[RMDB]
The record gives the reactivity of an RNA of 207 nucleotides to DMS and 2A3.
It was measured as part of the RMDB library M2RFPK.
2A3 adducts were read by reverse transcription with SuperScript II with manganese.
For DMS the reverse transcriptase was MarathonRT.
The DMS profile rests on 1,770 reads.
The reactions ran in a buffer of 150 mM KOAc, 10 mM MgCl2 and 150 mM bicine (pH 8.5), at 24 C.

RNA sequence: GGGAACGACUCGAGUAGAGUCGAAAACGACCUUAAACAGUUCUGGUGGUGCUCUGAAUGGAGUGCUCUACUGAGAUUAUAAAUUAGAAGGUAAGCUAUUAUCUCUUACAACAGGGCAGGGCUUGUUAAAAGCCUUUCAGUUUCGACUGAAAGGCAAUCUAAGAGAACGGUUCGCCGUUCUCUUAGAAAAAGAAACAACAACAACAAC
Reactivity to DMS in 0.01 (KOAc 150mM, MgCl2 10mM, bicine 150mM(pH8.5), 24C), signal-to-noise 1, nucleotides 027 to 156: c070g030a270c040c020u000u010a080a020a150c070a100g010u000u000c030u020g030g070u030g070g060u040g020c010u000c040u000g000a220a090u000g050g020a050g000u000g020c040u000c040u010a030c020u020g030a060g000a090u010u000a120u000a060a100a080u020u000a130g000a030a120g000g010u000a020a060g010c100u000a110u000u020a040u010c010u000c040u000u000a070c060a070a120c020a030g010g000g010c060a060g030g020g030c050u000u020g000u010u010a040a030a130a240g000c020c000u000u000u000c000a000g020u000u000u020c160g020a060c010u000g020a010a000a000g030g030c010a000a020
Reactivity to 2A3 in 0.01 (KOAc 150mM, MgCl2 10mM, bicine 150mM(pH8.5), 24C), signal-to-noise 2, nucleotides 027 to 156: c050g020a030c020c020u120u230a070a150a000c020a020g020u120u040c020u050g030g010u020g010g040u040g010c020u020c030u050g230a190a130u270g010g020a060g010u030g010c020u000c020u060a020c030u070g020a020g010a050u000u110a060u130a180a110a030u120u070a100g070a100a020g060g020u040a050a020g020c000u010a040u130u040a020u120c040u000c000u010u130a040c010a110a010c020a060g020g000g040c010a000g050g000g000c040u010u060g050u030u050a120a160a060a010g000c000c000u000u000u000c020a030g000u030u030u150c160g120a000c000u000g000a000a000a010g000g000c000a000a000